[RMDB]
RNA sequence: GGGAACGACUCGAGUAGAGUCGAAAAUGGCACGUGCAGGUGAGUGGCAGAGCGCCCACGCACCUUCUGGGCGCAAGGGCCCACAGCGUGCACGCAGCUUUUCACUGUGUAUCAGCAUCAACUCCUUUCAGUGCACCAUGGAACUUGCCAGAUUUGAAUAAAUGCGUAAUUUCGAUUACGCAUUUAUAAAAGAAACAACAACAACAAC
Reactivity to DMS in 0.01 (KOAc 150mM, MgCl2 10mM, bicine 150mM(pH8.5), 24C), signal-to-noise 3, nucleotides 027 to 156: u000g020g020c040a050c030g010u000g000c010a070g010g080u000g020a090g070u010g010g020c040a120g030a300g020c060g030c030c000c010a040c050g010c140a120c160c120u010u000c050u000g020g020g000c030g010c010a080a160g040g010g020c040c000c020a050c000a210g000c020g000u000g000c020a040c010g000c020a160g030c020u000u020u010u000c070a090c060u000g000u000g010u010a100u010c050a060g010c020a140u000c080a070a090c050u000c040c030u000u000u000c050a050g000u000g020c040a080c040c020a080u000g020g000a040a100c040u000u000g010c020c030a140g010a220u000u000u000g000a180
Reactivity to 2A3 in 0.01 (KOAc 150mM, MgCl2 10mM, bicine 150mM(pH8.5), 24C), signal-to-noise 5, nucleotides 027 to 156: u060g030g000c000a000c010g000u000g010c010a030g160g090u050g070a200g000u040g000g000c020a020g020a030g120c010g020c000c020c000a030c060g060c020a140c030c000u120u100c030u020g000g000g000c000g000c050a050a080g090g040g010c030c010c010a000c010a000g010c060g080u010g020c000a000c000g000c010a060g000c000u060u020u050u070c080a090c040u050g030u020g010u120a050u150c030a020g050c020a050u030c030a080a090c040u070c040c010u060u160u100c040a020g010u000g020c010a020c000c000a030u030g010g010a020a010c020u020u060g020c020c000a090g040a250u130u120u130g090a080
This 207-nucleotide RNA was probed chemically with DMS and 2A3.
The data come from the RNA Mapping Database (RMDB), library OK3TST.
Reactivities are rounded to 0.1 and cut off at 0 and 3.
For DMS, 7,846 sequencing reads were counted.
Values cover nucleotides 27 to 156.